Chemical mapping of a 177-nucleotide RNA with 2A3 and DMS. For 2A3, 15,709 sequencing reads were counted.

[RMDB]
RNA sequence: GGGAACGACUCGAGUAGAGUCGAAAAGAUAUGGAUAUAUCUAGGCUCCGAAGAACAGUCUCGGAAACGAGACUGGGAGGAGACCUAGAGUAUAUCCUAAGUCAAAAGUAGCUGUUCGCAGCUACAACUAAAUAUACAUGUUCGCAUGUAUAUUUAGAAAAGAAACAACAACAACAAC
Reactivity to 2A3 in 0.01 (KOAc 150mM, MgCl2 10mM, bicine 150mM(pH8.5), 24C), signal-to-noise 4, nucleotides 027 to 126: g040a030u090a050u210g000g010a010u010a010u010a010u010c000u010a000g010g010c020u000c010c000g230a300a030g020a080a010c000a010g000u000c000u000c000g030g050a150a080a050c010g000a000g000a000c000u010g000g000g010a030g000g020a010g080a140c010c000u000a000g000a000g000u010a000u000a000u000c000c000u020a160a020g060u030c050a020a040a090a220g000u000a010g010c000u020g110u130u100c300g010c150a010g000c000u000a000c000a000a010
Reactivity to DMS in 0.01 (KOAc 150mM, MgCl2 10mM, bicine 150mM(pH8.5), 24C), signal-to-noise 7, nucleotides 027 to 126: g010a040u010a300u010g000g000a010u000a010u000a020u000c000u000a010g010g010c000u000c010c000g000a140a190g010a150a200c010a010g010u000c000u000c000g000g000a090a120a190c010g000a010g010a010c000u000g000g000g010a130g010g010a010g010a130c010c000u000a000g000a030g020u010a010u000a000u000c000c000u010a040a130g010u000c030a090a090a120a150g010u000a010g000c010u000g000u000u010c270g040c000a010g010c000u000a010c000a090a230